[RMDB]
RNA sequence: GGGAACGACUCGAGUAGAGUCGAAAAUGCUACACGUCUAAGGACACUUUAGAUGAUAUCUUACAACAGGCUAAUAAGUCUGUUGGUAUUAUAUCUAUGCCUUUGGGAUAUGUGUCUCAUGGUUUAGGAGUGAGAGAGUGUUCGCACUCUCUCACUCAAAAGAAACAACAACAACAAC
Reactivity to 2A3 in 0.01 (KOAc 150mM, MgCl2 10mM, bicine 150mM(pH8.5), 24C), signal-to-noise 1, nucleotides 027 to 126: u050g000c000u010a000c070a010c030g070u000c030u020a050a000g050g040a030c020a030c120u100u060u100a060g020a000u090g010a000u020a000u000c010u020u050a010c000a010a000c000a010g000g000c000u050a180a090u140a300a000g000u000c000u000g020u000u020g000g010u000a020u000u060a020u000a010u030c000u010a070u020g010c000c030u050u100u060g080g000g000a020u070a090u260g060u030g010u000c010u030c000a040u050g040g070u060u130u140a030g070
About this RNA
Source: RMDB library 15KREP, as collected in RNAgym. Structure probing data (2A3) for a 177-nucleotide construct. Values cover nucleotides 27 to 126. Conditions: 150 mM KOAc, 10 mM MgCl2 and 150 mM bicine (pH 8.5), 24 C.